RNA sequence: GGGAACGACUCGAGUAGAGUCGAAAAGCCUGAAGUUCGCUUCAGGCAAAACCUUUGUGAAGCUGUAUAGGGAGCGUGGACCGUCCCAUUGGGACGGUUGCACGCGACGAUCUAUACACGGCUUCACUCUGGUAAAACCAAACGAUUCGUCGUUUGGCCUCGGAUACUAGUUCGCUAGUAUCCGAGGAAAAGAAACAACAACAACAAC
Reactivity to 2A3 in 0.01 (KOAc 150mM, MgCl2 10mM, bicine 150mM(pH8.5), 24C), signal-to-noise 2, nucleotides 027 to 156: g010c010c000u000g010a030a000g020u060u190c240g090c120u000u010c020a010g000g000c020a020a010a000a000c000c000u000u010u010g000u000g010a010a010g000c010u010g020u020a000u000a010g020g010g000a000g000c010g000u010g000g010a020c000c010g000u000c040c010c060a300u110u300g000g000g000a000c000g000g000u000u030g040c000a000c000g000c000g000a000c010g000a000u000c000u000a000u000a000c030a020c090g120g010c000u010u000c010a000c000u000c000u010g030g030u090a090a060a020a040c010c000a000a000a000c000g010a020u030u060c230g040u010c000g010u200u010u000g010g000
The record gives the reactivity of an RNA of 207 nucleotides to 2A3. Source: RMDB library RNAMAK, as collected in RNAgym. For 2A3, 2,221 sequencing reads were counted.